[RMDB]
The record gives the reactivity of an RNA of 177 nucleotides to DMS and 2A3. The reactions ran in a buffer of 150 mM KOAc, 10 mM MgCl2 and 150 mM bicine (pH 8.5), at 24 C. High DMS reactivity at an A or C suggests that its Watson-Crick edge is free. Reactivities are given for positions 27 through 126. 2A3 adducts were read by reverse transcription with SuperScript II with manganese. The 2A3 profile rests on 2,920 reads.

RNA sequence: GGGAACGACUCGAGUAGAGUCGAAAAAGCUGGCAGCAGGCUCUGGGUCAGGGGGGCAGGGACCACGGGCAUACCUGACAGUGAGGAGGGGCCACACCUGCAGAAAAGGAUGCAGGACUCCGCCUUGAUUCUAUUCGAGAUUCGUCUCGAAUAGAAUAAAAGAAACAACAACAACAAC
Reactivity to DMS in 0.01 (KOAc 150mM, MgCl2 10mM, bicine 150mM(pH8.5), 24C), signal-to-noise 5, nucleotides 027 to 126: a130g000c050u000g010g010c060a070g020c070a080g020g010c030u000c050u000g010g010g000u010c080a070g010g010g000g010g010g000c060a060g000g000g000a080c060c040a080c070g020g000g010c080a080u010a090c100c020u000g000a090c090a080g000u010g010a080g000g020a070g010g000g010g010c150c060a090c170a080c040c000u000g000c010a060g000a080a070a130a110g010g010a120u000g010c010a030g000g000a130c050u000c020c040g000c090c030u000u010g010
Reactivity to 2A3 in 0.01 (KOAc 150mM, MgCl2 10mM, bicine 150mM(pH8.5), 24C), signal-to-noise 2, nucleotides 027 to 126: a000g030c050u040g030g000c020a040g000c010a040g110g020c010u030c030u080g050g000g040u040c030a040g040g000g020g020g020g020c030a050g040g000g020a010c030c030a030c030g020g000g000c010a020u050a070c000c020u020g050a020c010a060g020u020g090a040g010g010a040g000g020g000g000c060c000a010c010a030c030c000u010g000c020a010g080a020a240a010a020g120g010a030u050g000c000a000g000g010a080c030u020c010c010g040c000c010u010u020g020